RNA sequence: GGGAACGACUCGAGUAGAGUCGAAAAGCCUCGGCAUCAGCAGCAGACGAGGAGGCGUUGGCGGCGUCCACUGUGCAAACUGAAAAACUUUUCGGCAUCCCGCUGUUCCCUCCUCCAGGUGCCGAAGGUCGCGACAGCUUUUCGAAGCUGUCGCGACAAAAGAAACAACAACAACAAC
Reactivity to 2A3 in 0.01 (KOAc 150mM, MgCl2 10mM, bicine 150mM(pH8.5), 24C), signal-to-noise 2, nucleotides 027 to 126: g010c000c000u000c000g030g000c000a070u080c040a020g260c100a060g080c030a000g100a200c050g010a060g040g000a000g000g030c090g060u010u080g020g070c040g030g040c060g020u040c010c000a030c100u090g000u050g040c020a030a140a090c010u120g080a140a050a000a090a140c060u050u060u050u020c030g030g000c000a020u020c030c010c010g000c000u070g110u070u030c020c010c020u010c000c020u000c000c000a040g000g000u000g000c000c000g040a010a010g040